[RMDB]
Structure probing data (DMS and 2A3) for a 177-nucleotide construct. High 2A3 reactivity points to a flexible backbone, as in loops and unpaired stretches. DMS adducts were read by reverse transcription with MarathonRT. The reactions ran in a buffer of 150 mM KOAc, 10 mM MgCl2 and 150 mM bicine (pH 8.5), at 24 C. For 2A3 the reverse transcriptase was SuperScript II with manganese. The data come from the RNA Mapping Database (RMDB), library OK1LIB. For 2A3, 1,621 sequencing reads were counted.
RNA sequence: GGGAACGACUCGAGUAGAGUCGAAAAUGUGCGCCACCACGCCCAGCUAACUUUUGUACUUUUGGUAGAGACGGGGUUUCACCGUGUUGGCCAGGGUGGUCUUGAACUCUUGACCUCAGGUGAUCCGAGUCGACAAACAUUUCGAUGUUUGUCGACUAAAAGAAACAACAACAACAAC
Reactivity to DMS in 0.01 (KOAc 150mM, MgCl2 10mM, bicine 150mM(pH8.5), 24C), signal-to-noise 1, nucleotides 027 to 126: u000g010u000g000c050g000c040c050a080c040c010a090c080g000c000c000c040a140g020c050u010a020a060c070u010u000u000u000g000u000a120c110u020u000u000u000g030g000u000a140g040a030g000a200c020g000g000g010g040u000u010u000c030a050c000c000g020u000g000u000u000g020g000c000c030a030g000g010g000u020g020g000u030c130u070u000g030a130a060c020u000c000u010u000g020a070c030c000u000c030a060g000g010u000g000a080u020c030c020g010
Reactivity to 2A3 in 0.01 (KOAc 150mM, MgCl2 10mM, bicine 150mM(pH8.5), 24C), signal-to-noise 2, nucleotides 027 to 126: u120g030u020g040c030g020c000c000a000c040c000a000c050g010c000c000c000a000g000c050u050a050a090c010u020u060u020u140g050u180a180c060u050u140u130u160g110g000u090a020g000a040g010a070c020g090g000g000g000u050u160u070c020a030c000c010g060u040g010u100u090g020g000c020c000a010g070g030g010u090g030g050u090c020u050u140g050a040a050c010u010c000u120u020g050a150c000c000u030c050a030g020g010u050g000a050u000c000c040g010